[RMDB]
RNA sequence: GGGAACGACUCGAGUAGAGUCGAAAAUUCGUGGUGCACGGCACCAUGGCCGACCCGCGCUGGCUCGAUCCCAGCGUCGACCCCAACGAGCGCACGCCCGGCACCUGCUAUCUGGGUGAUCCGCAGGUGGGAUCGACCGAUUCGUCGGUCGAUCCCAAAAAGAAACAACAACAACAAC
Reactivity to 2A3 in 0.01 (KOAc 150mM, MgCl2 10mM, bicine 150mM(pH8.5), 24C), signal-to-noise 1, nucleotides 027 to 126: u040u020c000g000u000g000g010u000g040c050a130c300g250g000c070a000c000c000a000u000g100g000c020c000g000a070c010c040c070g000c000g040c030u000g030g000c000u010c230g000a130u100c010c000c010a010g010c000g000u000c030g000a090c080c000c000c000a140a000c060g000a020g000c000g030c030a010c000g020c000c030c040g000g010c070a030c000c070u000g000c080u080a140u270c060u070g000g110g060u100g020a140u150c160c000g000c000a000g070g080